[RMDB]
RNA sequence: GGGAACGACUCGAGUAGAGUCGAAAAACGGAGGGUACGCCAUCCGACCAUUGGGUAGAAGCGUUCAAUCAGCACCGUGACGGUGCAGAUGGGAAAUUGCCCAUGAUACGCACCAUACGUGGUGCGAAAAAGCCAUCGGUGUUCGCACCGAUGGCAACACUCCUAGAUUGUUCGCAAUCUAGGAGUGAAAAGAAACAACAACAACAAC
Reactivity to 2A3 in 0.01 (KOAc 150mM, MgCl2 10mM, bicine 150mM(pH8.5), 24C), signal-to-noise 3, nucleotides 027 to 156: a000c010g010g000a000g020g010g040u110a040c120g050c060c010a120u010c010c000g110a060c000c020a090u040u060g000g000g020u050a040g010a150a010g040c040g060u050u080c030a030a070u020c020a020g000c000a000c000c000g180u230g220a190c220g020g010u000g000c010a000g010a010u020g000g010g040a000a110a060u050u030g030c020c000c000a010u060g030a010u060a040c020g010c000a020c000c000a020u050a110c210g090u040g000g000u000g000c000g020a010a010a000a000a000g000c010c010a010u000c000g000g000u020g030u040u050c200g020c090a000c010c000g000a000u000g040g000c000a000a000